An RNA of 207 nucleotides, treated with 2A3 and DMS and read out base by base.
RNA sequence: GGGAACGACUCGAGUAGAGUCGAAAAAUGAGGUCCGAGACAACCUGAAGACGCCCAGCUCAGCAGAGACUGGCUACGGCAAUCACUCAGUAACUAUUUGUUGAAUUGGACAUAAUAGAAGAGCUGAAGAAUUUUAAACAAGUCACCAUCAGUGCAACCUAAUAGGACCUUUCGAGGUCCUAUUAGGAAAAGAAACAACAACAACAAC
Reactivity to 2A3 in 0.01 (KOAc 150mM, MgCl2 10mM, bicine 150mM(pH8.5), 24C), signal-to-noise 2, nucleotides 027 to 156: a000u080g020a050g020g020u050c040c050g030a010g000a050c010a020a060c020c000u000g010a030a010g010a010c050g010c000c010c000a030g000c070u300c130a030g030c010a110g040a080g050a300c010u010g000g030c040u040a030c030g020g000c000a010a080u060c020a070c070u040c010a000g060u100a130a090c060u050a170u190u070u050g020u020u020g020a120a180u020u050g020g010a000c020a010u180a100a050u030a040g100a090a010g020a030g030c040u090g010a050a020g050a120a170u000u090u160u240a180a110a040c090a080a020g030u070c000a010c090c020a060u040c040a020g030u000g060c000a030a100
Reactivity to DMS in 0.01 (KOAc 150mM, MgCl2 10mM, bicine 150mM(pH8.5), 24C), signal-to-noise 1, nucleotides 027 to 156: a110u010g010a150g070g000u000c000c000g060a120g080a230c020a050a050c090c020u000g050a140a190g020a190c040g020c090c030c010a050g040c030u010c010a170g060c170a170g030a070g000a100c020u000g020g000c000u000a020c080g000g000c030a110a130u010c060a190c040u000c040a070g030u000a100a240c020u000a110u000u000u000g010u010u020g010a060a290u000u000g030g000a100c090a090u000a050a040u000a100g030a110a210g000a170g010c000u020g000a070a080g000a080a080u010u000u010u010a100a110a120c070a040a150g020u000c000a080c050c040a070u000c000a120g050u000g000c020a090a100
About this RNA
2A3 adducts were read by reverse transcription with SuperScript II with manganese. The RNA was probed in 150 mM KOAc, 10 mM MgCl2 and 150 mM bicine (pH 8.5) at 24 C.